[RMDB]
RNA sequence: GGGAACGACUCGAGUAGAGUCGAAAAGCCGCCGGACGUGUCGUUGCUGGAUCUGGUCGGGCGCGGCGCCGACGGUCUGCGCACGGCGGGCGAACGGGCAGUGCGCUCACCGGCCGCGGUGGUAGCGCGCUUGAGCGUGGUUCGCCACGCUCAAGCGAAAAGAAACAACAACAACAAC
Reactivity to 2A3 in 0.01 (KOAc 150mM, MgCl2 10mM, bicine 150mM(pH8.5), 24C), signal-to-noise 2, nucleotides 027 to 126: g090c010c020g000c000c000g080g030a050c070g130u060g010u090c040g100u130u300g010c030u090g110g080a100u100c090u210g090g080u050c050g000g000g000c050g020c000g090g000c010g020c000c000g020a040c000g010g010u040c050u090g030c060g000c020a030c050g030g030c000g000g000g000c010g020a060a020c040g060g070g000c010a030g050u100g120c030g020c000u020c000a080c030c000g120g010c030c050g010c010g020g010u040g020g070u110a060g100c050g000
Reactivity to DMS in 0.01 (KOAc 150mM, MgCl2 10mM, bicine 150mM(pH8.5), 24C), signal-to-noise 2, nucleotides 027 to 126: g000c010c030g000c010c020g000g000a200c180g010u000g020u000c020g020u010u020g050c040u000g010g000a080u000c130u010g030g020u000c000g020g000g020c030g010c040g030g000c030g020c010c010g000a180c020g000g000u000c030u000g000c070g000c100a080c130g020g010c010g040g000g030c020g000a030a090c040g000g000g020c030a060g000u000g010c020g010c020u000c030a050c040c020g010g010c070c130g010c020g010g000u000g010g020u010a060g000c040g010
This 177-nucleotide RNA was probed chemically with 2A3 and DMS.
For 2A3, 1,880 sequencing reads were counted.
For 2A3 the reverse transcriptase was SuperScript II with manganese.
The reactions ran in a buffer of 150 mM KOAc, 10 mM MgCl2 and 150 mM bicine (pH 8.5), at 24 C.
It was measured as part of the RMDB library OK2TRN.